[RMDB]
RNA sequence: GGGAACGACUCGAGUAGAGUCGAAAAGCGACGGCAAUCAGCGGCCAGGCGGCGUCAAGACAGAUCCCGCGCAAUUGGAGAAGGCUCCGCCAAAGGCCCAGAGCCAUAUUCGUCAGGCGCGCCAGAAGCUAUAGGUGAGGUUCGCCUCACCUAUAGCAAAAGAAACAACAACAACAAC
Reactivity to 2A3 in 0.01 (KOAc 150mM, MgCl2 10mM, bicine 150mM(pH8.5), 24C), signal-to-noise 1, nucleotides 027 to 126: g060c020g100a100c030g030g000c010a020a090u080c020a090g040c060g070g000c010c000a050g000g000c010g000g000c000g010u040c060a050a080g070a040c040a020g130a080u020c000c000c010g030c000g000c030a040a220u150u150g040g020a090g010a120a060g010g000c000u020c020c030g030c000c000a150a150a030g000g000c000c050c020a000g020a000g000c000c000a040u080a070u130u060c050g010u010c020a020g060g020c010g000c010g000c040c000a060g020a130a010
Reactivity to DMS in 0.01 (KOAc 150mM, MgCl2 10mM, bicine 150mM(pH8.5), 24C), signal-to-noise 3, nucleotides 027 to 126: g010c050g030a120c140g010g010c030a110a090u020c110a080g060c110g000g010c000c010a180g010g000c000g020g010c100g000u010c000a090a110g010a170c140a070g000a110u000c070c040c040g010c070g010c100a140a110u000u000g000g010a150g020a140a140g000g000c030u010c010c020g000c000c000a070a110a150g000g010c030c000c040a050g000a160g000c000c030a060u010a210u000u010c050g000u000c080a080g010g000c070g030c040g000c060c050a110g000a100a130

Source information:
The record gives the reactivity of an RNA of 177 nucleotides to 2A3 and DMS. DMS adducts were read by reverse transcription with MarathonRT. Values cover nucleotides 27 to 126.